[RMDB]
RNA sequence: GGGAACGACUCGAGUAGAGUCGAAAAGAAUAUAAGAGCGUCUUCGCGUCUUGACGUGAAUGAGCCUAGACUGUAGGGUCUAGUGGGAUAGUAACGCUCACUCACAAAACGCUAUUCCACAGGAAGAAAUCAUCGCAUGGUUCGCCAUGCGAUGAUUAAAAGAAACAACAACAACAAC
Reactivity to DMS in 0.01 (KOAc 150mM, MgCl2 10mM, bicine 150mM(pH8.5), 24C), signal-to-noise 1, nucleotides 027 to 126: g000a150a030u070a040u010a090a080g030a010g010c020g000u020c030u010u020c000g010c000g000u000c010u000u020g000a050c030g040u000g000a040a020u000g020a090g010c050c070u000a010g000a020c000u000g000u040a100g000g020g000u000c000u000a070g000u020g000g000g000a030u000a030g000u000a070a030c100g000c000u000c000a000c090u020c100a120c210a070a070a070a150c120g000c050u000a020u000u000c000c000a040c050a220g010g000a100a100g000a020
Reactivity to 2A3 in 0.01 (KOAc 150mM, MgCl2 10mM, bicine 150mM(pH8.5), 24C), signal-to-noise 3, nucleotides 027 to 126: g030a030a000u150a010u050a110a000g020a000g000c000g030u000c020u020u000c000g000c020g030u000c050u140u210g120a010c010g020u000g050a040a010u110g000a040g020c020c000u030a030g000a020c000u040g160u300a090g100g090g060u000c000u030a040g010u030g000g000g000a000u010a010g030u020a080a000c020g020c020u020c000a030c000u100c030a080c000a030a100a060a090c090g010c030u000a010u000u000c010c000a010c010a070g080g080a090a070g010a060

Source: RMDB library OK1LIB, as collected in RNAgym. An RNA of 177 nucleotides, treated with DMS and 2A3 and read out base by base. For DMS, 1,676 sequencing reads were counted. Values cover nucleotides 27 to 126. Values are in units of 0.01, from 0 to 300, in steps of 10. 2A3 adducts were read by reverse transcription with SuperScript II with manganese.